An RNA of 177 nucleotides, treated with DMS and 2A3 and read out base by base. For 2A3 the reverse transcriptase was SuperScript II with manganese. DMS (dimethyl sulfate) methylates the pairing face of unpaired adenines and cytosines.
RNA sequence: GGGAACGACUCGAGUAGAGUCGAAAAGAUAUGGAAAAAGUCUCCGAUAAGCGUAUGUCGGAAACGACAUAACGCUUUUGACGGAGUCGCUUCCUAAGUCAAAUCCUGACGGUUCGCCGUCAGGAAAGAUGUUUCGUUAGUUCGCUAACGAAACAUCAAAAGAAACAACAACAACAAC
Reactivity to DMS in 0.01 (KOAc 150mM, MgCl2 10mM, bicine 150mM(pH8.5), 24C), signal-to-noise 2, nucleotides 027 to 126: g020a020u000a140u000g000g000a020a020a110a190a160g010u000c020u000c000c020g010a140u000a000a000g000c000g020u000a000u000g000u000c020g010g000a030a030a060c010g020a020c000a000u000a080a040c010g040c020u000u010u000u010g030a180c090g000g000a010g000u000c020g010c300u000u000c000c000u010a050a150g000u000c020a130a130a140u000c000c000u010g010a010c000g000g010u010u020c230g030c000c000g000u000c010a000g000g000a010a020a060
Reactivity to 2A3 in 0.01 (KOAc 150mM, MgCl2 10mM, bicine 150mM(pH8.5), 24C), signal-to-noise 1, nucleotides 027 to 126: g010a010u070a030u090g000g090a000a090a000a040a050g030u010c010u000c000c030g080a230u110a300a000g010c000g000u000a000u010g000u000c000g070g000a030a030a000c010g010a020c000a000u090a240a090c010g020c000u000u010u020u080g100a020c020g000g000a010g030u020c000g020c080u000u000c000c010u010a060a000g000u000c040a000a000a300u000c010c000u000g000a020c010g000g100u070u100c300g060c080c010g000u000c010a000g000g000a000a010a010

For DMS the reverse transcriptase was MarathonRT.
Values cover nucleotides 27 to 126.
It was measured as part of the RMDB library TTRDEL.